[RMDB]
RNA sequence: GGGAACGACUCGAGUAGAGUCGAAAACGCGCACAUCACCACUGCUGGCUCCUUCGGGUACCACAGCCAAGCUCCUCGCCGAGGCCGUCUACAAGACUCAACGUUAGAUGGCGCGCGACGUUUCUAAUAGAGUCGAGUCCCGCUCGUCACGGGUACCGGUAGUAGUGUACUUCGGUACACUACUACCAAAAGAAACAACAACAACAAC
Reactivity to 2A3 in 0.01 (KOAc 150mM, MgCl2 10mM, bicine 150mM(pH8.5), 24C), signal-to-noise 2, nucleotides 027 to 156: c000g050c010g030c000a010c010a140u030c010a010c030c010a040c060u050g060c040u000g020g000c020u080c000c050u000u100c070g080g000g010u110a100c030c050a090c090a030g050c010c030a030a020g030c000u010c000c000u150c050g110c080c060g010a010g060g050c050c050g000u000c000u060a110c080a200a020g010a090c050u070c140a130a110c090g060u110u080a040g000a000u010g030g000c010g000c000g000c000g000a000c010g020u030u000u100c040u000a130a070u060a190g000a000g000u010c010g000a000g090u040c020c000c000g000c000u010c000g120u050c020a040c030g040g000g010u100a120c060c060
Description: An RNA of 207 nucleotides, treated with 2A3 and read out base by base. Conditions: 150 mM KOAc, 10 mM MgCl2 and 150 mM bicine (pH 8.5), 24 C. For 2A3 the reverse transcriptase was SuperScript II with manganese. The 2A3 profile rests on 1,349 reads. As a SHAPE reagent, 2A3 marks flexible, mostly unpaired nucleotides at the ribose 2'-OH.